[RMDB]
RNA sequence: GGGAACGACUCGAGUAGAGUCGAAAAUUUCUUGCCGGAGGUAGAGCACUGGAUAGGCGAUGGGCCCUACCGGGUUACUGACCUUAGCCAAACUCCGAAUGCCGGUAAGUGAGAGCGCGGCAGUGAGCAUACUCUAAGGGUUCGCCCUUAGAGUAUGAAAAGAAACAACAACAACAAC
Reactivity to DMS in 0.01 (KOAc 150mM, MgCl2 10mM, bicine 150mM(pH8.5), 24C), signal-to-noise 9, nucleotides 027 to 126: u000u010u000c000u000u000g010c000c010g000g010a050g010g010u010a080g000a030g010c070a090c220u000g000g000a050u000a020g000g010c020g010a120u000g010g000g010c010c000c000u010a120c300c290g000g000g010u000u000a070c010u000g000a300c300c000u000u000a020g000c000c000a020a130a220c010u000c030c040g010a060a100u040g000c010c000g000g010u000a010a020g010u000g000a080g000a090g000c030g010c060g000g010c060a060g010u010g000a090g010
Reactivity to 2A3 in 0.01 (KOAc 150mM, MgCl2 10mM, bicine 150mM(pH8.5), 24C), signal-to-noise 4, nucleotides 027 to 126: u020u030u020c010u000u010g020c010c000g030g010a020g010g040u120a020g010a000g040c040a020c080u010g010g010a020u010a010g010g000c020g010a010u020g000g020g020c010c000c010u040a140c070c080g000g000g040u050u070a300c010u020g020a030c000c000u010u010a000g000c000c010a050a120a190c010u020c020c000g030a050a030u060g020c010c010g020g000u010a000a010g020u050g040a110g000a000g030c050g000c020g050g000c040a050g020u030g080a030g050

An RNA of 177 nucleotides, treated with DMS and 2A3 and read out base by base. Values cover nucleotides 27 to 126. The 2A3 profile rests on 7,749 reads. 2A3 adducts were read by reverse transcription with SuperScript II with manganese. Source: RMDB library OK2TRN, as collected in RNAgym.